This 207-nucleotide RNA was probed chemically with 2A3. The data come from the RNA Mapping Database (RMDB), library VIROID. The 2A3 profile rests on 863 reads.

[RMDB]
RNA sequence: GGGAACGACUCGAGUAGAGUCGAAAAUGGGAACGCGAUGACACGCGUGAGCGCUCGGCGACCAACGGACGACAAUUGUCGAGGCGGCUCUGAUACCAUUUGUCACGGGCCUAGCCCUUCGGCCACCACACUUGGCCCAUGCGGCACUCCCAUGCCACUUAGCAGUGGACUUCGGUCCACUGCUAAGAAAAGAAACAACAACAACAAC
Reactivity to 2A3 in 0.01 (KOAc 150mM, MgCl2 10mM, bicine 150mM(pH8.5), 24C), signal-to-noise 2, nucleotides 027 to 156: u040g000g010g030a100a020c000g070c010g110a060u250g180a050c070a010c140g010c010g040u030g000a000g010c030g000c020u030c000g030g000c020g080a080c020c080a110a110c170g110g140a070c110g020a070c080a110a000u030u010g000u010c020g070a070g300g300c070g070g000c000u010c000u080g020a020u040a040c030c030a080u040u020u110g130u070c050a040c090g010g000g000c000c000u010a040g000c000c040c010u090u140c140g000g010c000c040a060c070c020a060c000a000c040u070u080g060g000c070c000c000a030u100g060c070g020g080c000a010c020u050c010c010c010a010u130g000c020c000a030